Structure probing data (2A3) for a 207-nucleotide construct. Source: RMDB library M2RFPK, as collected in RNAgym. Conditions: 150 mM KOAc, 10 mM MgCl2 and 150 mM bicine (pH 8.5), 24 C. For 2A3 the reverse transcriptase was SuperScript II with manganese.

RNA sequence: GGGAACGACUCGAGUAGAGUCGAAAAGUGUAGCGUCACUUUGAUGGCGGUACUAUGAAUUGAUGCAAGGUGUGGAGCGACCUUAAACAGUUCUGGUGGUGCUCUGAAUGGAGUGCUCUACUGAGGUUUAACUUAUGCACGUUCGCGUGCAUAAGAAGGCAGAAUUAACGUUCGCGUUAAUUCUGCCAAAAGAAACAACAACAACAAC
Reactivity to 2A3 in 0.01 (KOAc 150mM, MgCl2 10mM, bicine 150mM(pH8.5), 24C), signal-to-noise 3, nucleotides 027 to 156: g070u030g020u010a030g070c000g020u030c000a030c060u160u110u260g230a300u040g010g010c000g020g090u020a030c010u040a050u150g020a050a030u080u040g040a080u120g060c050a030a010g010g020u020g020u070g050g000a010g000c000g020a030c000c000u070u090a070a090a010c040a040g010u040u020c000u030g040g000u020g020g020u000g000c010u000c030u060g110a060a040u250g030g010a020g000u040g010c000u020c010u050a040c040u050g050a080g060g040u060u080u090a060a010c000u000u010a000u000g010c000a000c000g020u040u050c090g010c020g100u000g000c000a000u000a000a000g000a010a050